[RMDB]
This 177-nucleotide RNA was probed chemically with DMS and 2A3.
For DMS the reverse transcriptase was MarathonRT.
Conditions: 150 mM KOAc, 10 mM MgCl2 and 150 mM bicine (pH 8.5), 24 C.
Source: RMDB library OK2TRN, as collected in RNAgym.
RNA sequence: GGGAACGACUCGAGUAGAGUCGAAAAAAGGGAGUGUUUAUCAUGCUUACAAUGGGGACAGCAUUAAGUCAACAAGUAGAUGCCAAUUGGCAAACUUAUAUUAUGAUUGCCGUCUACUUCUUGAUACAGUCUUACUUGUCUUCGGACAAGUAAGACUAAAAGAAACAACAACAACAAC
Reactivity to DMS in 0.01 (KOAc 150mM, MgCl2 10mM, bicine 150mM(pH8.5), 24C), signal-to-noise 3, nucleotides 027 to 126: a090a080g020g000g010a080g030u000g010u000u000u000a100u010c140a040u010g000c060u010u000a070c120a050a120u010g010g000g000g010a080c120a030g030c070a050u020u000a060a120g010u000c000a020a020c070a020a000g010u000a000g000a020u000g010c300c030a040a060u010u000g020g020c130a030a020a040c170u000u010a090u010a160u010u000a100u040g000a020u000u000g010c200c000g010u000c000u000a020c010u000u000c170u000u000g020a010u010a110c200
Reactivity to 2A3 in 0.01 (KOAc 150mM, MgCl2 10mM, bicine 150mM(pH8.5), 24C), signal-to-noise 2, nucleotides 027 to 126: a000a000g040g010g000a050g030u100g050u040u000u030a110u070c030a050u080g000c020u060u050a070c090a070a260u120g000g040g000g070a020c010a010g000c010a060u150u050a120a010g000u030c010a000a000c010a010a010g010u010a000g010a020u010g010c030c000a030a090u040u030g080g050c000a050a040a030c090u200u140a100u030a070u300u120a160u260g000a020u000u020g010c010c020g010u010c010u000a000c000u010u010c040u030u000g000a000u050a120c080